Overview
This 177-nucleotide RNA was probed chemically with 2A3 and DMS. The data come from the RNA Mapping Database (RMDB), library OK2TST.
RNA sequence: GGGAACGACUCGAGUAGAGUCGAAAAGGUUUGGAAUAGCCACCAUGGUUAUGACCUUUACAGGUUUGCUGGUGCUAGAAGGCACACUCCUGACCAUUGUGUCCAUGGUGUUCUUCGCCUGCCUGGACUCCAGCAUGGAUUUCGAUCCAUGCUGGAGAAAAGAAACAACAACAACAAC
Reactivity to 2A3 in 0.01 (KOAc 150mM, MgCl2 10mM, bicine 150mM(pH8.5), 24C), signal-to-noise 3, nucleotides 027 to 126: g060g010u140u210u220g100g030a130a090u070a090g000c050c000a010c000c000a030u020g010g100u210u270a100u300g060a080c000c000u020u020u030a060c020a000g000g080u090u170u170g080c180u150g030g040u020g000c010u060a160g090a290a250g140g000c000a000c010a010c010u020c030c010u050g020a090c030c060a050u020u100g030u030g000u050c030c000a020u050g000g000u010g020u040u120c010u010u030c030g000c000c010u030g020c000c010u050g030g030a030
Reactivity to DMS in 0.01 (KOAc 150mM, MgCl2 10mM, bicine 150mM(pH8.5), 24C), signal-to-noise 3, nucleotides 027 to 126: g010g030u000u000u010g030g010a120a060u000a070g020c300c010a020c030c030a030u000g020g010u000u010a070u020g000a010c050c040u010u000u000a090c130a010g000g020u000u000u010g010c240u020g020g010u000g000c010u000a060g010a140a120g020g000c010a000c030a090c070u000c040c020u000g000a070c080c080a110u010u000g000u010g020u000c010c060a040u000g000g040u010g000u010u000c050u000u000c190g020c050c020u000g000c020c020u000g000g000a210